[RMDB]
RNA sequence: GGGAACGACUCGAGUAGAGUCGAAAAAUACAACGUCGAAUGGCUGAUCACAAUGGUUCUCGCCAGGCCGGACGCUGUUUUCGCGCCGGCCAGGAACCGGUGUCACGUUUCGCUGCCGGUGAACGCGUGUCUGUCUUCGAUUCGUCGAAGACAGACAAAAAGAAACAACAACAACAAC
Reactivity to 2A3 in 0.01 (KOAc 150mM, MgCl2 10mM, bicine 150mM(pH8.5), 24C), signal-to-noise 2, nucleotides 027 to 126: a020u170a010c070a140a030c030g080u090c020g070a080a080u120g100g070c070u030g040a120u120c050a010c050a120a160u140g110g000u060u000c070u030c020g020c030c050a020g010g000c020c060g060g010a110c000g010c030u100g070u190u160u050u200c020g000c010g000c050c000g000g000c000c010a000g000g010a000a000c000c000g020g000u020g020u050c030a030c060g030u020u090u100c030g000c010u020g020c030c010g010g000u030g050a100a030c010g000c060g140
Reactivity to DMS in 0.01 (KOAc 150mM, MgCl2 10mM, bicine 150mM(pH8.5), 24C), signal-to-noise 2, nucleotides 027 to 126: a090u020a090c060a020a070c090g010u000c030g020a040a060u000g000g020c110u000g020a060u010c030a070c080a090a100u000g020g000u030u000c020u000c180g020c120c100a160g000g000c000c000g000g000a070c010g010c010u010g030u000u000u010u010c180g020c000g000c030c000g010g010c010c000a020g000g010a070a060c010c000g000g010u010g000u000c000a040c100g010u000u000u000c050g040c030u000g010c040c060g000g030u010g010a110a050c140g020c070g020
Notes
This 177-nucleotide RNA was probed chemically with 2A3 and DMS. Conditions: 150 mM KOAc, 10 mM MgCl2 and 150 mM bicine (pH 8.5), 24 C. 2A3 adducts were read by reverse transcription with SuperScript II with manganese. It was measured as part of the RMDB library OK2TST.